Structure probing data (2A3 and DMS) for a 177-nucleotide construct. Reactivities are given for positions 27 through 126. The data come from the RNA Mapping Database (RMDB), library TTRDES. The RNA was probed in 150 mM KOAc, 10 mM MgCl2 and 150 mM bicine (pH 8.5) at 24 C.
[RMDB]
RNA sequence: GGGAACGACUCGAGUAGAGUCGAAAAAGAUAUGGAGAUAAGACAUGACCCGAAAGUGCUAAGACAGUUGAUCGGAAACGAUCAAUCGAGCACUAGUAGCUGGUCAACAGCUUAUCUCCUAAGUCAACACAUUAUCGACGUUCGCGUCGAUAAUGUGAAAAGAAACAACAACAACAAC
Reactivity to 2A3 in 0.01 (KOAc 150mM, MgCl2 10mM, bicine 150mM(pH8.5), 24C), signal-to-noise 1, nucleotides 027 to 126: a000g100a060u130a080u200g000g000a010g000a010u010a000a000g040a050c150a190u170g000a020c040c000c000g050a060a120a000g020u010g040c030u130a170a070g150a070c060a060g040u020u000g020a000u000c020g030g030a080a050a070c020g000a000u030c010a000a000u050c010g020a010g000c000a020c010u000a000g050u020a010g000c250u160g000g010u000c010a010a040c040a060g000c000u000u010a000u000c000u030c000c000u000a010a000g040u000c020a000a090
Reactivity to DMS in 0.01 (KOAc 150mM, MgCl2 10mM, bicine 150mM(pH8.5), 24C), signal-to-noise 2, nucleotides 027 to 126: a060g000a060u000a300u000g000g000a010g020a010u000a000a020g010a080c050a240u000g000a000c020c010c020g030a100a130a150g010u020g010c010u010a120a070g060a150c300a070g000u000u000g000a020u000c000g000g000a170a110a160c000g010a010u000c020a000a040u000c070g010a040g030c000a020c020u000a050g000u000a100g010c180u010g020g000u000c010a010a050c300a200g000c000u020u010a000u000c020u010c010c000u010a010a040g040u010c010a070a190